[RMDB]
RNA sequence: GGGAACGACUCGAGUAGAGUCGAAAAGAGCGUCGAGAGACGAAGAGAAGUGCACCGAUCAGCAACGGAGAACGUAAUGGUGCACAAGAGUAAGUCAGUGUAACGUUCUCGGGGCACUGGAGGCAGACACGAGCAUCAUCUUCGGAUGAUGCUCGUGAAAAGAAACAACAACAACAAC
Reactivity to DMS in 0.01 (KOAc 150mM, MgCl2 10mM, bicine 150mM(pH8.5), 24C), signal-to-noise 2, nucleotides 027 to 126: g020a080g000c040g010u000c040g000a210g000a240g020a010c000g000a040a010g020a130g000a120a150g030u000g020c000a030c020c010g000a250u040c140a030g000c110a110a050c110g040g000a090g000a020a060c000g000u000a070a040u070g020g000u000g060c050a000c010a060a130g000a090g030u010a100a150g020u010c060a050g000u000g000u030a180a160c000g000u000u000c050u000c060g000g000g000g000c060a080c050u000g030g000a020g000g050c070a090g050a100
Reactivity to 2A3 in 0.01 (KOAc 150mM, MgCl2 10mM, bicine 150mM(pH8.5), 24C), signal-to-noise 2, nucleotides 027 to 126: g110a000g000c010g130u000c000g000a010g000a000g000a030c010g090a100a000g090a000g030a060a020g000u000g000c000a010c090c000g040a070u140c100a020g190c000a010a060c090g090g090a040g030a130a020c000g050u100a000a080u180g000g020u020g020c020a010c000a010a000g070a000g120u240a020a020g000u030c100a010g000u000g040u110a080a020c030g020u000u000c080u050c000g020g000g010g000c090a000c060u090g010g030a060g000g000c040a000g030a030